The record gives the reactivity of an RNA of 177 nucleotides to 2A3 and DMS. The DMS profile rests on 2,103 reads. The 2A3 profile rests on 2,701 reads. For 2A3 the reverse transcriptase was SuperScript II with manganese. Source: RMDB library TTRDES, as collected in RNAgym.

RNA sequence: GGGAACGACUCGAGUAGAGUCGAAAAGAUAUGGAUCCGUGGCUCCUUGGAUUUAUAUCGGAAACGAUAUUGUCAGGAGACCACGGGAUCCUAAGUCAAAAUCUUACGCCCUUCGGGGCGUAAGAAAGCUAAUAUCGAUCUUCGGAUCGAUAUUAGCAAAAGAAACAACAACAACAAC
Reactivity to 2A3 in 0.01 (KOAc 150mM, MgCl2 10mM, bicine 150mM(pH8.5), 24C), signal-to-noise 2, nucleotides 027 to 126: g030a020u100a010u220g000g010a000u000c000c010g010u000g010g030c010u030c050c050u130u260g190g010a060u300u300u020a040u050a000u000c000g000g040a060a050a010c030g000a010u010a010u000u000g020u010c010a010g000g050a020g300a300c000c010a000c020g000g000g000a000u000c010c020u000a140a000g040u030c020a110a010a040a250u020c000u020u000a000c010g000c020c000c000u030u090c270g020g030g000g000c000g010u000a000a000g020a000a000a000
Reactivity to DMS in 0.01 (KOAc 150mM, MgCl2 10mM, bicine 150mM(pH8.5), 24C), signal-to-noise 2, nucleotides 027 to 126: g010a050u010a300u010g010g000a000u000c000c010g030u010g000g000c000u000c000c000u020u020g050g010a010u000u000u000a010u000a000u020c000g010g010a160a130a220c010g000a020u000a000u000u000g010u010c010a030g000g000a000g000a170c000c000a010c000g040g020g000a010u010c000c000u000a040a110g000u000c070a200a110a120a090u000c010u000u000a000c000g010c000c000c000u010u010c260g030g000g010g010c000g000u000a000a000g000a020a070a100